RNA sequence: GGGAACGACUCGAGUAGAGUCGAAAAAAAGAUAUGGAUGCGUGGGAGAGCGGCCAUGCGUUUGACGAUGCCUCGGAAACGAGGCAUCCGAGCAUGGAAGCUCGAAGAACACGCAUCCUAAGUCAAAGCUCUUAGAUUAGUUCGCUAAUCUAAGAGCAAAAGAAACAACAACAACAAC
Reactivity to DMS in 0.01 (KOAc 150mM, MgCl2 10mM, bicine 150mM(pH8.5), 24C), signal-to-noise 3, nucleotides 027 to 126: a090a070a060g000a050u010a300u010g000g010a000u000g000c000g000u000g010g020g000a150g000a020g010c010g010g020c010c010a010u010g000c010g020u010u010u030g010a190c300g000a020u000g010c000c000u000c000g010g000a120a080a170c010g010a010g020g010c010a000u000c010c010g000a070g000c000a010u000g000g000a020a030g020c000u000c010g000a050a130g000a140a190c000a010c000g000c000a000u010c000c010u000a000a060g010u000c010a110a130a160
Reactivity to 2A3 in 0.01 (KOAc 150mM, MgCl2 10mM, bicine 150mM(pH8.5), 24C), signal-to-noise 2, nucleotides 027 to 126: a010a000a050g060a040u070a040u140g010g000a010u000g000c000g000u010g010g020g040a110g000a010g010c030g010g010c010c000a000u010g020c030g030u170u190u210g030a040c020g010a010u000g010c000c010u000c000g020g030a090a090a030c010g020a010g000g010c000a000u000c000c010g010a010g000c010a010u010g000g000a010a010g000c010u010c020g030a040a010g020a000a000c010a000c010g000c000a000u000c000c000u000a020a010g030u020c040a050a090a110
This 177-nucleotide RNA was probed chemically with DMS and 2A3. The 2A3 profile rests on 8,677 reads. 2A3 adducts were read by reverse transcription with SuperScript II with manganese. The data come from the RNA Mapping Database (RMDB), library TTRDES. The reactions ran in a buffer of 150 mM KOAc, 10 mM MgCl2 and 150 mM bicine (pH 8.5), at 24 C.